[RMDB]
RNA sequence: GGGAACGACUCGAGUAGAGUCGAAAAUCACAAAGCGGAUUUAGCUCGGUUGGGAGAGGUCCAGACCGAUGAUCUGGUCGUCCUGUGUCCGAGACACAGAAUUCGCACCAUAAACAACGGGAGAUUCGCACUGCCUAGUGUUCGCACUAGGCAGUGCAAAAGAAACAACAACAACAAC
Reactivity to 2A3 in 0.01 (KOAc 150mM, MgCl2 10mM, bicine 150mM(pH8.5), 24C), signal-to-noise 1, nucleotides 027 to 126: u060c040a020c060a300a000a000g000c000g000g000a000u000u000u000a000g000c000u000c000g000g000u100u040g080g010g000a030g000a020g040g130u010c000c000a000g000a000c000c120g180a250u300g070a160u000c000u000g000g000u000c000g040u000c000c000u000g000u000g200u020c000c000g020a000g250a000c040a000c000a030g040a030a000u000u000c000g000c000a000c010c000a000u270a000a060a100c000a020a000c010g180g000g000a220g130a110u260u220c000